[RMDB]
RNA sequence: GGGAACGACUCGAGUAGAGUCGAAAAGCGUGUUUCAUUAUGAAGCAAGUCAAGUUUAAUGAUCUUGUAAAAAACAUUAAAGUACAAAUAAAUGCAAGCAAUAUAGUUUCAUUUAGUUCAAAACGUUUAGUCUCUUUUGCAUAAGCAAAAUGUGUUAACCACUGAUUGUCUUCGGACAAUCAGUGGUAAAAGAAACAACAACAACAAC
Reactivity to 2A3 in 0.01 (KOAc 150mM, MgCl2 10mM, bicine 150mM(pH8.5), 24C), signal-to-noise 1, nucleotides 027 to 156: g030c030g020u010g000u010u060u000c010a060u000u190a110u300g000a000a000g000c030a120a000g140u110c020a000a020g000u000u070u120a010a010u010g020a000u050c060u050u040g050u060a020a020a020a020a020a020c000a000u020u040a160a030a050g080u110a040c070a030a190a000u030a000a030a030u020g040c020a010a010g030c000a070a000u100a100u070a300g010u000u010u010c020a060u000u050u150a020g010u080u100c020a000a090a040a070c020g000u000u030u060a120g010u000c040u020c000u090u000u000u130g090c000a030u160a290a070g020c040a020a040a040a110u120g090u000g000u110u080a010

This 207-nucleotide RNA was probed chemically with 2A3. The data come from the RNA Mapping Database (RMDB), library ARCHII. Reactivities are rounded to 0.1 and cut off at 0 and 3. The RNA was probed in 150 mM KOAc, 10 mM MgCl2 and 150 mM bicine (pH 8.5) at 24 C.